[RMDB]
RNA sequence: GGGAACGACUCGAGUAGAGUCGAAAAGCAAAGAAAUUUUAUCCCAAUAAGGCGAAGCGUGCAAGUCGAAUAAAGCUAAUGCUGCUAGCGAGCACGCGAGCCCUAGCAGACUCCUAGCGACAAAAAACAAUAAACCUAACUUCGGUUAGGUUUAUUGAAAAGAAACAACAACAACAAC
Reactivity to 2A3 in 0.01 (KOAc 150mM, MgCl2 10mM, bicine 150mM(pH8.5), 24C), signal-to-noise 3, nucleotides 027 to 126: g060c020a040a090a020g130a060a190a030u020u150u100u110a070u070c020c010c000a010a060u110a050a010g000g000c000g040a060a010g020c010g000u020g000c010a100a030g090u090c020g070a080a060u180a140a060a010g020c020u050a160a010u260g050c050u010g000c000u000a020g000c000g050a030g020c010a000c020g010c010g010a000g000c000c000c000u010a000g000c010a020g020a120c050u050c040c050u040a020g030c030g080a040c070a020a130a000a010a000a000
Reactivity to DMS in 0.01 (KOAc 150mM, MgCl2 10mM, bicine 150mM(pH8.5), 24C), signal-to-noise 5, nucleotides 027 to 126: g000c170a050a090a080g010a100a070a130u010u000u000u000a110u000c000c010c000a130a140u010a080a070g000g000c000g000a090a180g000c000g010u000g010c010a100a160g040u000c070g000a090a080u010a100a140a100g000c010u010a070a110u010g010c060u000g010c110u010a070g010c040g000a280g000c010a010c020g020c010g000a210g000c010c000c030u000a060g000c070a060g000a090c080u000c020c050u000a070g020c090g000a060c100a000a030a090a050a030a080
An RNA of 177 nucleotides, treated with 2A3 and DMS and read out base by base. It was measured as part of the RMDB library M2PK90. For 2A3 the reverse transcriptase was SuperScript II with manganese. The RNA was probed in 150 mM KOAc, 10 mM MgCl2 and 150 mM bicine (pH 8.5) at 24 C. The DMS profile rests on 3,712 reads. DMS adducts were read by reverse transcription with MarathonRT.